[RMDB]
RNA sequence: GGGAACGACUCGAGUAGAGUCGAAAAAUGACAUUCGUGUCAUGAAGAGGGGUCAAGCACUCCCUUGGAUUUACUUUUGACGAGCUGAAGCCUCCACGGCUCGAUAAGUUGUCAGGGAGGCUUGACGGAGGCACCCGGAAAGUCCAUUCGUGGACAACGAAAAUGUAGGUUUCGACCUACAUUUUCGAAAAGAAACAACAACAACAAC
Reactivity to DMS in 0.01 (KOAc 150mM, MgCl2 10mM, bicine 150mM(pH8.5), 24C), signal-to-noise 2, nucleotides 027 to 156: a000u010g000a020c020a080u010u000c300g060u000g000u000c000a020u000g020a040a130g020a150g010g030g000g010u000c010a040a080g020c000a250c000u000c000c010c030u020u020g090g000a170u000u000u000a070c030u000u020u000u010g010a260c150g040a050g010c010u000g030a060a090g000c060c000u000c020c030a300c030g010g030c000u000c000g010a080u010a000a050g000u000u000g040u000c100a050g010g040g010a050g030g040c020u000u000g010a070c030g060g000a030g040g010c000a140c020c000c020g020g020a100a040a140g010u000c000c000a110u000u000c140g000u000g010g020a010c000a060a200
Reactivity to 2A3 in 0.01 (KOAc 150mM, MgCl2 10mM, bicine 150mM(pH8.5), 24C), signal-to-noise 4, nucleotides 027 to 156: a000u000g000a000c000a010u020u100c280g100u090g000u030c010a010u020g020a170a060g110a160g060g050g050g010u010c010a020a000g000c050a180c300u010c000c010c030u030u090g100g010a050u150u210u170a060c020u040u090u090u160g250a100c010g000a000g000c000u010g010a040a000g020c000c000u000c010c000a030c020g000g030c000u000c000g000a000u010a030a030g050u140u200g290u300c180a050g000g000g000a000g000g000c000u000u000g000a000c010g000g000a000g000g000c010a020c020c020c000g050g110a150a160a020g000u000c010c010a050u060u110c180g140u070g010g000a010c010a050a040

About this RNA:
An RNA of 207 nucleotides, treated with DMS and 2A3 and read out base by base. Values cover nucleotides 27 to 156. DMS (dimethyl sulfate) methylates the pairing face of unpaired adenines and cytosines. For DMS the reverse transcriptase was MarathonRT. The reactions ran in a buffer of 150 mM KOAc, 10 mM MgCl2 and 150 mM bicine (pH 8.5), at 24 C. For 2A3 the reverse transcriptase was SuperScript II with manganese. The 2A3 profile rests on 2,878 reads. The data come from the RNA Mapping Database (RMDB), library RNAMAK.